[RMDB]
RNA sequence: GGGAACGACUCGAGUAGAGUCGAAAAACUGUCUUGCAGAGGUGUGUGGAGAAUUCCCCUGGGACCGCAAUUUGUGGACCAGUUCCUUUUAUCAUGGAAGCGUGGAUGGAAUCUCUGAGGAUCAGCGCAUAUCUCCCGAUUUCGAUCGGGAGAUAUGAAAAGAAACAACAACAACAAC
Reactivity to DMS in 0.01 (KOAc 150mM, MgCl2 10mM, bicine 150mM(pH8.5), 24C), signal-to-noise 5, nucleotides 027 to 126: a160c050u000g000u000c020u000u000g010c030a030g010a080g020g010u000g010u010g020u010g020g010a100g010a100a180u000u000c010c010c040c030u000g000g010g000a150c020c010g040c020a090a150u000u010u010g080u000g010g000a300c000c010a030g000u000u000c010c000u000u010u000u000a080u030c170a040u000g000g010a080a060g000c100g010u010g000g010a060u000g000g000a140a040u010c010u000c030u000g010a080g000g000a040u000c060a030g000c150g020
Reactivity to 2A3 in 0.01 (KOAc 150mM, MgCl2 10mM, bicine 150mM(pH8.5), 24C), signal-to-noise 3, nucleotides 027 to 126: a000c010u030g030u010c040u040u200g050c000a000g010a020g040g030u040g010u010g080u090g110g050a090g070a240a210u080u060c000c020c000c030u020g000g010g300a300c050c000g000c030a120a290u230u140u290g000u030g000g000a010c010c010a010g010u010u040c030c020u040u190u070u150a250u210c100a040u120g010g040a040a040g080c070g060u130g060g000a050u040g020g060a100a080u020c050u000c000u010g020a000g030g010a040u120c010a000g020c020g010